Structure probing data (DMS and 2A3) for a 177-nucleotide construct. Conditions: 150 mM KOAc, 10 mM MgCl2 and 150 mM bicine (pH 8.5), 24 C. For DMS the reverse transcriptase was MarathonRT. For DMS, 4,189 sequencing reads were counted.
RNA sequence: GGGAACGACUCGAGUAGAGUCGAAAACUGGCGCUCAUCCGCAAUGCCAAUCCCGACGUCUAUUUCGUCUGGGUGAUGGGUGCGGACAAUCUUGCUUCCUUCCAUCGCUGGCAGCGCUGGCGCGAGAACCUAUGCCUCAUUUCGAUGAGGCAUAGGUAAAAGAAACAACAACAACAAC
Reactivity to DMS in 0.01 (KOAc 150mM, MgCl2 10mM, bicine 150mM(pH8.5), 24C), signal-to-noise 4, nucleotides 027 to 126: c030u000g010g020c020g010c010u010c080a130u010c120c020g020c010a130a070u000g010c000c010a090a240u000c010c000c020g000a020c020g010u010c300u000a130u010u000u000c000g010u000c010u000g030g000g000u010g000a090u000g000g000g010u000g000c190g020g030a030c090a080a140u010c130u010u010g010c100u010u000c010c000u000u000c030c030a040u000c010g030c190u000g010g030c020a080g000c060g010c140u000g000g000c050g010c030g000a080g000a160
Reactivity to 2A3 in 0.01 (KOAc 150mM, MgCl2 10mM, bicine 150mM(pH8.5), 24C), signal-to-noise 5, nucleotides 027 to 126: c010u020g080g000c010g000c010u130c090a070u040c070c020g000c050a030a100u080g030c020c000a010a060u050c010c000c000g000a000c000g010u020c110u300a300u080u300u120c020g010u000c070u230g010g000g000u080g010a020u070g020g010g020u060g060c110g000g020a000c020a010a130u100c090u120u120g030c050u080u050c000c000u140u000c010c020a040u030c020g020c070u030g010g020c010a030g040c040g000c020u030g010g000c010g000c010g010a050g020a020